This 207-nucleotide RNA was probed chemically with 2A3 and DMS.
For 2A3, 1,860 sequencing reads were counted.
DMS adducts were read by reverse transcription with MarathonRT.
For 2A3 the reverse transcriptase was SuperScript II with manganese.
Conditions: 150 mM KOAc, 10 mM MgCl2 and 150 mM bicine (pH 8.5), 24 C.
For DMS, 3,240 sequencing reads were counted.
RNA sequence: GGGAACGACUCGAGUAGAGUCGAAAAAUGGUGACUUCUCCUACACGUUCGCAAGCGAAAAGAGCAUGUACACGACGUGUAAUGUGAUGUUUGAUGAUGAACAAAACAUGUAUCAGCAGGACGUUGAGCCAGUAUUCGAUCGUGAGGCUACUCUACGCAUACGUAUGGGCUUCGGCCCAUACGUAUGAAAAGAAACAACAACAACAAC
Reactivity to 2A3 in 0.01 (KOAc 150mM, MgCl2 10mM, bicine 150mM(pH8.5), 24C), signal-to-noise 4, nucleotides 027 to 156: a010u070g020g020u030g030a080c010u020u000c010u040c030c000u010a010c000a010c010g080u170u130c040g010c070a140a120g020c030g140a100a110a090a070g140a070g000c030a070u120g010u070a070c060a020c160g040a010c010g020u010g040u040a000a040u060g030u030g020a070u050g090u030u070u050g150a150u050g010a030u090g000a050a040c030a030a030a010a010c030a020u050g050u110a080u130c070a050g080c020a010g040g030a030c040g030u050u040g000a000g010c010c030a000g010u030a130u030u090c040g020a040u020c060g040u030g080a040g080g000c010u020a030c000u020c000u030a000c070g030
Reactivity to DMS in 0.01 (KOAc 150mM, MgCl2 10mM, bicine 150mM(pH8.5), 24C), signal-to-noise 2, nucleotides 027 to 156: a110u010g040g000u000g020a080c030u000u020c000u010c010c030u010a020c010a030c010g040u010u000c010g040c020a130a160g030c060g000a060a070a090a170g010a170g000c050a050u000g000u000a140c120a070c030g010a050c010g010u000g010u020a030a070u010g010u000g000a190u000g010u000u020u000g020a180u010g010a120u000g010a050a190c050a050a060a050a070c050a070u000g010u000a100u000c030a080g020c040a090g050g010a090c030g010u000u000g010a190g000c020c030a080g000u020a110u010u000c070g000a060u000c060g000u000g010a090g000g010c030u000a030c000u000c020u010a080c030g020